[RMDB]
RNA sequence: GGGAACGACUCGAGUAGAGUCGAAAAGAAAGAGCUCAGCUGAUCUGUGGCUUAGGUAGUUUCAUGUUGUUGGGAUUGAGUUUUGAACUCGGCAACAAGAAACUGCCUGAGUUACAUCAGUCGGUAAAACUUCCCCUACGUUCGCGUAGGGGAAGUUAAAAGAAACAACAACAACAAC
Reactivity to DMS in 0.01 (KOAc 150mM, MgCl2 10mM, bicine 150mM(pH8.5), 24C), signal-to-noise 1, nucleotides 027 to 126: g020a090a050a040g030a130g000c000u000c060a120g010c010u010g000a000u000c220u000g040u000g000g010c000u000u000a000g000g010u000a000g010u010u000u010c000a130u000g000u000u000g030u000u000g000g000g000a100u020u000g000a100g010u010u020u000u030g000a090a030c000u000c000g000g000c020a000a040c010a000a040g030a070a000a010c000u000g010c000c000u000g000a000g040u010u010a010c040a080u000c020a010g000u010c110g010g000u000a060a060
Reactivity to 2A3 in 0.01 (KOAc 150mM, MgCl2 10mM, bicine 150mM(pH8.5), 24C), signal-to-noise 3, nucleotides 027 to 126: g150a010a100a010g110a000g040c020u030c030a000g000c000u030g000a060u030c050u060g000u010g000g000c000u000u010a000g010g000u010a000g020u000u010u010c030a050u050g000u020u010g010u000u010g050g050g050a190u100u100g110a120g260u150u110u140u290g060a050a020c000u000c010g010g000c000a000a000c000a010a060g010a000a010a010c000u000g000c000c000u000g000a000g000u000u010a000c000a020u040c010a000g010u010c030g020g000u080a070a070

An RNA of 177 nucleotides, treated with DMS and 2A3 and read out base by base. It was measured as part of the RMDB libraries RFM100 and RFMREP. The RNA was probed in 150 mM KOAc, 10 mM MgCl2 and 150 mM bicine (pH 8.5) at 24 C. Reactivities are rounded to 0.1 and cut off at 0 and 3.